Chemical mapping of a 177-nucleotide RNA with DMS and 2A3. Reactivities are rounded to 0.1 and cut off at 0 and 3. It was measured as part of the RMDB library TTRDEL. The 2A3 profile rests on 2,735 reads. The DMS profile rests on 2,342 reads. The reactions ran in a buffer of 150 mM KOAc, 10 mM MgCl2 and 150 mM bicine (pH 8.5), at 24 C.
RNA sequence: GGGAACGACUCGAGUAGAGUCGAAAAGAUAUGGAAUCCCUGCUUUUGACGCCUACCAGGUCGGAAACGACCUUUUAAGGCGAUAAGCCUGGAUUCCUAAGUCAAAAGAUGUGCUUCGGCACAUCAACUACUCUCCACAGUUCGCUGUGGAGAGUAGAAAAGAAACAACAACAACAAC
Reactivity to DMS in 0.01 (KOAc 150mM, MgCl2 10mM, bicine 150mM(pH8.5), 24C), signal-to-noise 2, nucleotides 027 to 126: g010a010u000a140u010g010g000a040a000u010c000c000c030u000g000c000u010u000u010u030g000a160c030g030c000c000u000a080c210c150a040g020g010u000c000g010g000a010a020a050c010g030a030c000c000u000u000u000u000a070a030g010g010c010g010a020u000a010a040g000c000c020u000g010g010a010u000u000c000c010u000a020a040g000u010c010a070a050a140a110g000a020u000g020u000g000c000u000u010c250g010g000c000a000c000a000u000c000a060a220
Reactivity to 2A3 in 0.01 (KOAc 150mM, MgCl2 10mM, bicine 150mM(pH8.5), 24C), signal-to-noise 1, nucleotides 027 to 126: g000a020u010a000u050g000g000a000a020u020c030c000c040u000g000c040u100u140u070u270g300a260c160g000c000c010u000a050c030c050a000g000g000u020c000g000g000a030a040a000c000g030a060c010c110u000u000u000u030a070a020g000g030c000g050a070u020a050a010g010c000c000u000g000g000a010u020u000c000c000u000a020a030g010u040c000a040a000a050a200g000a000u000g000u000g010c000u070u100c300g100g010c010a000c000a000u010c000a000a000